[RMDB]
RNA sequence: GGGAACGACUCGAGUAGAGUCGAAAAGCUGAGGGCUAUUGAGGCGCAACAGCAUCUGUUGCAACUCACAGUCUGGGGCAUCAAGCAGCUCCAGGCAAGAGUCCUGGCUGUGGAAAGAUACCUACAGCCGGGUGUGAGUUUUCGAACUCACACCCGGAAAAGAAACAACAACAACAAC
Reactivity to 2A3 in 0.01 (KOAc 150mM, MgCl2 10mM, bicine 150mM(pH8.5), 24C), signal-to-noise 2, nucleotides 027 to 126: g050c080u110g150a020g040g000g000c010u000a060u100u120g000a000g000g000c000g040c000a030a000c000a010g130c120a180u150c060u060g000u030u000g000c010a020a000c000u000c000a000c010a060g000u040c000u000g000g000g070g000c010a000u080c050a080a080g130c020a030g000c000u000c000c000a020g000g000c130a150a000g030a000g070u030c000c000u000g010g000c000u010g030u010g060g030a160a090a000g050a060u190a040c000c030u050a070c010a060g050
Reactivity to DMS in 0.01 (KOAc 150mM, MgCl2 10mM, bicine 150mM(pH8.5), 24C), signal-to-noise 2, nucleotides 027 to 126: g000c060u000g000a000g000g000g000c000u000a100u000u020g000a140g000g030c300g060c040a020a020c010a000g010c120a150u070c040u000g050u000u000g020c000a030a100c000u010c010a120c300a060g000u000c000u000g000g010g010g000c000a120u050c180a160a140g060c270a060g000c000u000c000c000a000g000g000c000a140a030g000a050g010u010c000c000u000g040g030c000u000g000u010g010g010a110a080a030g030a140u020a180c110c000u010a000c180a130g000

Structure probing data (2A3 and DMS) for a 177-nucleotide construct. For DMS, 1,399 sequencing reads were counted. Conditions: 150 mM KOAc, 10 mM MgCl2 and 150 mM bicine (pH 8.5), 24 C. Reactivities are given for positions 27 through 126.